[RMDB]
RNA sequence: GGGAACGACUCGAGUAGAGUCGAAAACAGUAUGCAUAGUGCACGUGGAUCAUGAGUGUUCUGGAUGCGAGAAACGGUUAUUACUUAAAUUGGAUUUUAUCAGAAAUACAAAGAUCGCAGAACAAAAUCUGUCUAUCCAAUUCGUUGGAUAGACAGAAAAAGAAACAACAACAACAAC
Reactivity to DMS in 0.01 (KOAc 150mM, MgCl2 10mM, bicine 150mM(pH8.5), 24C), signal-to-noise 4, nucleotides 027 to 126: c080a130g010u000a050u020g010c060a130u020a080g000u010g000c020a080c100g030u010g000g020a080u030c050a060u030g030a220g030u000g010u010u000c080u010g000g010a060u000g030c070g000a110g000a080a090a060c130g000g000u010u010a070u000u010a100c110u000u010a010a060a130u000u010g010g010a110u010u000u010u000a120u060c170a080g000a060a020a010u010a040c030a040a080a090g010a030u010c010g040c040a010g000a120a070c060a050a060a050a120
Reactivity to 2A3 in 0.01 (KOAc 150mM, MgCl2 10mM, bicine 150mM(pH8.5), 24C), signal-to-noise 5, nucleotides 027 to 126: c040a020g130u190a100u130g010c020a010u090a120g100u090g100c040a000c070g050u060g020g050a070u040c030a110u120g070a030g100u030g000u020u020c010u020g060g020a070u060g020c000g050a030g000a030a060a020c060g020g060u130u060a100u110u100a120c060u050u110a070a120a090u110u100g040g020a020u060u000u050u030a110u110c020a020g090a070a040a020u150a030c040a010a060a010g030a010u020c030g010c070a020g040a060a030c010a030a030a000a030

This 177-nucleotide RNA was probed chemically with DMS and 2A3. 2A3 is a SHAPE reagent: it acylates the 2'-hydroxyl of flexible nucleotides of all four kinds. The 2A3 profile rests on 4,011 reads. The RNA was probed in 150 mM KOAc, 10 mM MgCl2 and 150 mM bicine (pH 8.5) at 24 C. The data come from the RNA Mapping Database (RMDB), library OK1LIB. For DMS the reverse transcriptase was MarathonRT.